[RMDB]
RNA sequence: GGGAACGACUCGAGUAGAGUCGAAAAGAUCGGAAACAGCAGCAGGUGAGUCCGCCUUAUGUGAAGGAUCGGCUGAAACACGAGGAAAUACUGAGCCAACGCAAGACGGUAGCCGGACAGUAGCAACAAAACGCUUACGUGUUCGCACGUAAGCGAAUCUAAUGUAGUGCUUCGGCACUACAUUAGAAAAAGAAACAACAACAACAAC
Reactivity to 2A3 in 0.01 (KOAc 150mM, MgCl2 10mM, bicine 150mM(pH8.5), 24C), signal-to-noise 4, nucleotides 027 to 156: g050a060u050c040g030g030a090a050a050c030a040g040c010a000g000c010a000g050g020u040g040a060g050u020c020c020g060c020c020u140u120a150u120g110u030g080a040a050g030g010a030u090c060g000g010c010u040g020a080a050a010c090a020c070g020a040g020g090a050a080a000u110a070c030u070g030a030g040c000c000a060a020c050g000c030a010a050g040a040c050g070g000u040a010g030c000c000g000g000a010c010a010g030u040a020g030c020a010a090c000a040a120a020a020c030g000c000u000u000a000c000g000u000g020u030u040c140g020c070a000c000g000u000a000a000g000c000g000a000a000
Reactivity to DMS in 0.01 (KOAc 150mM, MgCl2 10mM, bicine 150mM(pH8.5), 24C), signal-to-noise 2, nucleotides 027 to 156: g000a090u000c070g000g000a070a090a070c060a110g000c010a060g010c100a100g010g020u000g000a150g010u020c010c030g050c040c000u000u000a070u000g030u000g010a090a120g010g010a090u010c050g000g010c020u010g020a140a070a080c040a080c080g000a170g010g000a080a010a120u000a120c030u000g010a070g050c010c000a050a090c030g030c040a040a050g010a140c030g040g000u000a070g010c040c010g020g020a090c020a080g020u010a060g030c050a050a130c080a020a050a070a110c000g010c010u000u000a010c020g040u000g010u000u010c300g040c030a010c020g010u000a000a010g040c000g000a000a030